Chemical mapping of a 177-nucleotide RNA with 2A3 and DMS. Conditions: 150 mM KOAc, 10 mM MgCl2 and 150 mM bicine (pH 8.5), 24 C. The DMS profile rests on 44,543 reads. Source: RMDB library OK2TRN, as collected in RNAgym. For DMS the reverse transcriptase was MarathonRT.
RNA sequence: GGGAACGACUCGAGUAGAGUCGAAAACAGGCCCGCACGCCUACACCUCCUACCUUGAAUUGGCAUCGAAUAAGGUAUAUGCCAAACCGCCCUCUGGCAAGAACAUCGCAUACGAGUGUAAAUGCGGAAUCAUAGUGUUAUUCGUAACACUAUGAUUAAAAGAAACAACAACAACAAC
Reactivity to 2A3 in 0.01 (KOAc 150mM, MgCl2 10mM, bicine 150mM(pH8.5), 24C), signal-to-noise 9, nucleotides 027 to 126: c030a000g050g010c010c020c010g020c030a040c060g020c000c000u060a040c030a050c030c010u010c000c000u040a090c000c010u080u110g070a140a070u090u040g040g020c010a030u030c070g110a150a120u180a190a040g070g020u090a100u010a010u140g000c000c000a030a030a040c030c020g010c010c000c000u040c040u030g020g000c010a010a010g010a030a020c030a050u080c020g000c030a010u060a120c080g050a090g110u100g010u120a080a130a020u050g000c010g010g020
Reactivity to DMS in 0.01 (KOAc 150mM, MgCl2 10mM, bicine 150mM(pH8.5), 24C), signal-to-noise 9, nucleotides 027 to 126: c140a120g010g010c030c020c040g010c070a060c110g010c030c020u000a070c100a090c060c030u000c020c030u000a070c040c020u000u000g020a100a140u000u000g010g010c020a030u000c080g010a110a100u010a080a080g010g010u010a090u000a050u000g000c010c000a020a050a130c110c060g000c020c020c040u000c060u000g000g010c060a060a070g000a070a080c120a070u000c020g010c030a030u000a100c100g010a100g010u010g010u000a040a070a070u000g010c010g000g000